[RMDB]
RNA sequence: GGGAACGACUCGAGUAGAGUCGAAAAUGAACGCUUUCGAUGGAAAGCUUGACCAGCUAAUCUUCUGCAACGCCAUUACGAGGACUGCCCUUAGAGGCUCAUGGCGAUAGGUCACCCCGCCGGUCGGUUAAGAAUCAGCGAUUCGUCGCUGAUUCAAACAAUCGUUUAGGUUCGCCUAAACGAUUGUAAAAGAAACAACAACAACAAC
Reactivity to DMS in 0.01 (KOAc 150mM, MgCl2 10mM, bicine 150mM(pH8.5), 24C), signal-to-noise 1, nucleotides 027 to 156: u000g010a100a090c120g010c020u000u000u010c010g000a190u000g000g000a040a000a050g000c000u000u010g020a120c050c020a120g000c030u040a080a130u000c020u000u010c040u010g000c020a100a150c060g010c040c020a120u000u000a120c110g020a180g050g010a070c070u020g060c000c000c050u000u010a120g010a150g010g050c020u020c020a050u000g020g010c000g040a170u000a010g000g010u000c050a080c010c000c020c000g000c010c050g030g020u010c020g020g010u000u000a060a210g000a040a010u000c010a000g010c000g030a090u000u000c180g010u000c000g020c000u020g000a010u000u000c000a000a100
Reactivity to 2A3 in 0.01 (KOAc 150mM, MgCl2 10mM, bicine 150mM(pH8.5), 24C), signal-to-noise 2, nucleotides 027 to 156: u130g020a030a020c050g030c000u020u050u030c040g100a130u210g140g070a060a010a000g030c000u020u030g020a000c000c010a020g010c040u020a090a110u100c120u120u030c070u120g060c040a070a020c030g010c010c010a040u080u140a050c080g020a110g070g030a090c060u110g040c020c010c020u020u120a110g050a150g140g000c020u020c020a000u020g000g020c000g040a050u080a070g000g020u010c030a060c000c010c000c030g030c040c080g010g090u070c030g010g030u080u090a160a030g000a000a000u010c000a000g000c000g000a030u060u030c120g060u000c000g100c000u000g000a000u000u000c010a000a000
Source: RMDB library M2RFPK, as collected in RNAgym. Chemical mapping of a 207-nucleotide RNA with DMS and 2A3. DMS adducts were read by reverse transcription with MarathonRT. For 2A3 the reverse transcriptase was SuperScript II with manganese.